This 207-nucleotide RNA was probed chemically with DMS and 2A3. It was measured as part of the RMDB library OK3TST. Values are in units of 0.01, from 0 to 300, in steps of 10. For 2A3, 1,645 sequencing reads were counted. For DMS, 3,984 sequencing reads were counted. The reactions ran in a buffer of 150 mM KOAc, 10 mM MgCl2 and 150 mM bicine (pH 8.5), at 24 C.

RNA sequence: GGGAACGACUCGAGUAGAGUCGAAAAAUCUCUCGCGCCUUAAUGGAUGAGUUCACUGAGACAGUAAAAGAGGCCACCCUAAGUCAAUGGGGAUUCUUUAGCCCAUACGGUAUUGGCGACAACGAUGCUUGUACUAUUAACCCUUACGAUGGCUGGGAACUAUACAAGCGUUCGCGCUUGUAUAGUUAAAAGAAACAACAACAACAAC
Reactivity to DMS in 0.01 (KOAc 150mM, MgCl2 10mM, bicine 150mM(pH8.5), 24C), signal-to-noise 2, nucleotides 027 to 156: a140u000c030u010c020u000c050g050c080g010c030c020u000u000a060a040u000g020g020a070u020g010a080g020u020u000c040a080c000u000g020a110g000a030c030a120g030u000a070a030a030a060g010a120g010g020c050c020a080c010c020c020u000a090a110g030u010c080a070a090u020g010g020g020g000a110u000u000c070u000u000u010a160g020c040c000c020a110u010a080c090g020g030u000a030u000u000g000g020c040g030a120c030a090a080c090g010a090u000g030c010u000u010g040u000a040c030u000a060u000u010a070a100c010c000c010u000u000a090c080g010a090u000g010g020c010u010g010g020g010
Reactivity to 2A3 in 0.01 (KOAc 150mM, MgCl2 10mM, bicine 150mM(pH8.5), 24C), signal-to-noise 3, nucleotides 027 to 156: a020u040c010u000c030u030c050g000c010g090c060c020u130u130a100a040u120g020g040a020u070g040a010g080u070u070c050a020c100u060g010a010g080a100c020a090g070u110a030a030a100a050g040a030g010g020c020c010a050c040c000c000u060a150a040g050u070c050a040a040u070g000g030g040g000a040u120u040c030u040u060u080a030g000c000c010c010a030u050a040c060g060g000u030a070u020u060g020g000c000g050a050c060a110a010c070g070a040u110g010c020u090u160g020u010a030c020u010a030u100u110a080a100c000c020c050u050u060a040c080g060a050u070g040g000c050u020g030g010g000